Source: RMDB library OK3TST, as collected in RNAgym. An RNA of 207 nucleotides, treated with DMS and 2A3 and read out base by base. For DMS the reverse transcriptase was MarathonRT. The RNA was probed in 150 mM KOAc, 10 mM MgCl2 and 150 mM bicine (pH 8.5) at 24 C. Values cover nucleotides 27 to 156.
RNA sequence: GGGAACGACUCGAGUAGAGUCGAAAAUCGCCACCAUCUUUCACUGGCCGCCAUCCGUUACUGACGUUAUGCCGCUGACCGAAGUGCUGGAAUGGCGGUAUAAAGCGAUUCAGAGAAGCGGGGCCAACGAUGAGUGAUAACAACCUGCGGCUGCAGGCACAAAGAUCUUCUUCGGAAGAUCUUUGUGAAAAGAAACAACAACAACAAC
Reactivity to DMS in 0.01 (KOAc 150mM, MgCl2 10mM, bicine 150mM(pH8.5), 24C), signal-to-noise 2, nucleotides 027 to 156: u000c020g000c040c020a070c040c030a140u010c020u000u000u000c140a050c040u020g000g040c000c040g030c010c040a080u000c020c050g030u000u000a170c010u010g010a140c060g000u000u000a050u000g020c020c010g070c010u010g000a300c040c000g010a170a150g000u000g020c120u040g020g010a090a150u000g000g030c000g060g030u000a060u000a010a100a100g000c000g000a120u000u000c020a060g000a210g000a110a150g010c060g000g000g000g070c030c000a010a030c020g000a040u000g000a160g020u000g000a140u000a080a110c090a080a130c000c020u000g010c050g030g040c090u010g010c030a040g010g000
Reactivity to 2A3 in 0.01 (KOAc 150mM, MgCl2 10mM, bicine 150mM(pH8.5), 24C), signal-to-noise 5, nucleotides 027 to 156: u080c020g110c030c010a020c010c010a030u020c020u020u280u170c120a130c180u030g010g010c030c030g070c140c040a180u100c030c030g050u100u070a070c010u010g010a010c010g010u010u000a010u020g020c010c000g000c020u040g050a040c000c020g050a200a090g260u140g210c150u110g040g030a150a090u080g030g000c000g000g000u000a000u000a010a010a000g040c000g080a080u060u060c010a020g060a020g020a210a000g050c020g030g020g010g000c000c000a010a010c040g010a020u030g000a040g070u020g020a080u100a140a040c070a040a070c000c000u010g010c040g230g070c140u190g000c030a010g010g000